Notes
Source: RMDB library OK2TST, as collected in RNAgym. Structure probing data (DMS and 2A3) for a 177-nucleotide construct. The RNA was probed in 150 mM KOAc, 10 mM MgCl2 and 150 mM bicine (pH 8.5) at 24 C. High DMS reactivity at an A or C suggests that its Watson-Crick edge is free. Values cover nucleotides 27 to 126.

RNA sequence: GGGAACGACUCGAGUAGAGUCGAAAAAGAAAAUCGCCGAGCGCGAUCGCUUGCAGGAAGAACUGGACAAGCUCGCGCCACCGCCGGAUGCCGGCUACAUGCAGCGCGUCGGUGAGCGCGUGAAGCGAUCGAUAGAGCAAUUCGUUGCUCUAUCGAUAAAAGAAACAACAACAACAAC
Reactivity to DMS in 0.01 (KOAc 150mM, MgCl2 10mM, bicine 150mM(pH8.5), 24C), signal-to-noise 4, nucleotides 027 to 126: a110g020a100a060a100a050u010c010g030c010c010g000a230g010c110g020c010g000a010u000c090g000c010u000u000g010c020a110g020g000a110a090g020a100a150c040u000g000g000a110c070a040a070g010c020u000c000g010c020g010c010c030a030c030c040g000c040c000g000g010a120u000g000c020c090g010g020c010u000a030c190a080u000g010c020a240g000c020g000c020g000u000c030g000g020u010g020a090g000c000g000c000g020u000g000a100a090g010c110g000
Reactivity to 2A3 in 0.01 (KOAc 150mM, MgCl2 10mM, bicine 150mM(pH8.5), 24C), signal-to-noise 4, nucleotides 027 to 126: a010g080a010a050a000a030u040c020g010c060c050g090a060g030c080g000c010g030a030u050c030g000c010u010u040g030c020a020g070g060a140a210g070a200a110c020u060g010g080a060c020a000a020g000c010u020c020g000c010g010c000c000a000c010c020g010c000c000g070g070a220u160g080c070c060g110g010c030u070a070c060a090u250g020c000a010g000c010g000c000g010u020c010g010g010u030g010a100g000c010g010c000g020u050g030a070a010g040c020g030
Annotation: For DMS, 4,771 sequencing reads were counted.